[RMDB]
RNA sequence: GGGAACGACUCGAGUAGAGUCGAAAACCUCAACCAGAAGGUCUCGUUCGAGGGGUUCAAUGCGGUCUUCGAAUCAUACAAGAGUAAAAAGGGCCUCACGCUCGACGAUGUGAUGCCCCUGGUGAGGGCUCUAGUGAGCAUUCGUGCUCACUAGAGCAAAAGAAACAACAACAACAAC
Reactivity to DMS in 0.01 (KOAc 150mM, MgCl2 10mM, bicine 150mM(pH8.5), 24C), signal-to-noise 2, nucleotides 027 to 126: c010c000u000c030a100a060c000c010a010g010a200a110g000g030u000c050u000c030g020u000u000c010g000a040g000g010g040g020u000u000c160a100a090u020g000c140g000g000u000c000u000u000c040g030a130a050u000c100a070u010a100c300a100a120g000a060g010u020a010a030a050a190a070g000g010g000c010c010u000c040a040c060g000c120u000c120g000a070c140g000a100u000g010u010g000a010u010g000c000c010c010c000u000g020g010u010g010a120g000g000
Reactivity to 2A3 in 0.01 (KOAc 150mM, MgCl2 10mM, bicine 150mM(pH8.5), 24C), signal-to-noise 2, nucleotides 027 to 126: c000c010u030c010a080a100c000c000a030g020a130a020g070g050u000c020u000c030g070u140u060c010g040a010g030g050g000g050u090u150c080a110a120u170g010c060g040g110u000c010u020u020c040g030a040a040u000c030a010u080a300c070a130a130g060a000g110u170a030a010a090a070a030g030g000g000c030c010u010c020a080c010g120c020u020c010g090a060c060g050a120u050g030u070g060a040u120g000c000c000c010c000u010g000g000u030g000a010g000g040